Structure probing data (DMS and 2A3) for a 177-nucleotide construct.
RNA sequence: GGGAACGACUCGAGUAGAGUCGAAAAGAAAAGAAAUUGACAGUUGAUUUUGACAUGGAAUCCAGCAAGGAAGCUACUUCAACAUCAUUUGAUGUAAAGUUUGGGGAAUGGUGGAAUAGACAGUUGCCUUGCAAACCGAAUUCGUUCGGUUUGCAAGAAAAGAAACAACAACAACAAC
Reactivity to DMS in 0.01 (KOAc 150mM, MgCl2 10mM, bicine 150mM(pH8.5), 24C), signal-to-noise 2, nucleotides 027 to 126: g020a040a030a120a070g010a030a140a040u030u040g020a090c230a060g000u000u020g000a120u020u000u000u010g000a110c130a100u010g000g010a060a060u010c010c080a050g040c060a030a090g000g000a060a150g000c050u000a030c090u030u000c140a060a050c030a000u000c000a150u020u000u010g030a030u020g000u010a050a050a000g000u000u030u030g000g020g010g010a080a000u000g030g000u000g000g000a060a060u000a050g000a120c160a020g030u000u000g020c120
Reactivity to 2A3 in 0.01 (KOAc 150mM, MgCl2 10mM, bicine 150mM(pH8.5), 24C), signal-to-noise 3, nucleotides 027 to 126: g030a000a010a000a010g030a000a110a050u220u200g100a080c130a010g000u030u020g080a300u040u070u070u040g110a020c030a050u070g030g010a020a010u000c000c000a040g050c100a140a000g100g020a030a040g020c020u030a020c010u080u070c060a120a060c000a010u030c000a100u070u130u300g020a010u050g010u070a070a020a050g010u060u090u140g060g040g000g000a120a020u050g000g070u050g000g060a030a010u030a130g060a010c030a020g070u110u030g090c030
The DMS profile rests on 2,249 reads. 2A3 adducts were read by reverse transcription with SuperScript II with manganese. The RNA was probed in 150 mM KOAc, 10 mM MgCl2 and 150 mM bicine (pH 8.5) at 24 C. The data come from the RNA Mapping Database (RMDB), library OK1LIB.